Conditions: 150 mM KOAc, 10 mM MgCl2 and 150 mM bicine (pH 8.5), 24 C. Structure probing data (2A3) for a 207-nucleotide construct.
RNA sequence: GGGAACGACUCGAGUAGAGUCGAAAACAUGCCAGGGCUGGUGUUGGGCACAGGGGAAGGGGCAUGGCUUGAGACACAAGACCAGCGUGGAGGCUGUAGUGUAGUAUUGACCCGAGGGCUUCAACCUUCUGAUGGUGUACACACCAUUUUUUGAGCACUCACCAUCGAUAUUCGUAUCGAUGGUGAGAAAAGAAACAACAACAACAAC
Reactivity to 2A3 in 0.01 (KOAc 150mM, MgCl2 10mM, bicine 150mM(pH8.5), 24C), signal-to-noise 1, nucleotides 027 to 156: c100a010u100g040c000c000a000g000g040g010c000u020g000g030u040g040u210u060g040g030g000c110a060c070a050g080g030g010g110a100a060g030g080g040g040c170a120u050g020g000c000u010u010g030a050g030a000c050a010c050a240a030g020a110c000c050a000g000c010g000u050g060g060a060g090g020c050u110g100u110a030g010u010g000u070a070g010u010a070u040u090g080a010c010c010c010g000a030g000g000g000c000u090u060c010a000a150c020c000u070u180c020u060g060a140u010g060g060u050g060u120a040c130a000c000a000c060c010a040u060u030u000u000u010u070g030a050g030c000a000